An RNA of 177 nucleotides, treated with DMS and 2A3 and read out base by base. The data come from the RNA Mapping Database (RMDB), library OK2TST. Reactivities are given for positions 27 through 126. For 2A3 the reverse transcriptase was SuperScript II with manganese. The DMS profile rests on 3,232 reads.
[RMDB]
RNA sequence: GGGAACGACUCGAGUAGAGUCGAAAAGCGCGUGACCCCAACCCCACAAUCCGACAUCGACGCAGCACGCGCCGCGGCACACGUGGGAUUCCCCUGGUGGGCAGUCAUCCUUGGCCUCGGCAUUGCCCUCAAGGUUACGAUUCGUCGUAACCUUGAGAAAAGAAACAACAACAACAAC
Reactivity to DMS in 0.01 (KOAc 150mM, MgCl2 10mM, bicine 150mM(pH8.5), 24C), signal-to-noise 3, nucleotides 027 to 126: g020c090g030c050g020u020g000a230c050c010c000c040a070a170c060c010c010c020a080c140a090a090u010c050c040g010a090c090a070u000c060g000a070c050g020c050a100g020c050a040c110g040c050g000c020c040g020c120g010g000c050a100c080a080c110g000u010g000g010g000a100u000u000c040c020c000c070u000g010g030u020g020g000g010c100a060g000u000c050a050u010c030c040u010u000g000g000c020c040u000c050g000g040c060a090u010u000g000c030c020
Reactivity to 2A3 in 0.01 (KOAc 150mM, MgCl2 10mM, bicine 150mM(pH8.5), 24C), signal-to-noise 2, nucleotides 027 to 126: g010c040g030c010g070u060g070a120c000c000c010c000a030a030c020c000c010c010a040c030a030a080u050c030c020g070a030c060a120u040c040g040a040c020g000c020a040g020c030a040c040g050c020g000c000c010g010c000g030g000c050a030c020a010c130g040u090g040g030g000a020u040u090c020c010c000c030u100g190g020u180g040g040g000c010a010g040u020c020a050u040c020c010u050u050g050g020c000c000u040c000g030g000c060a050u000u210g040c000c020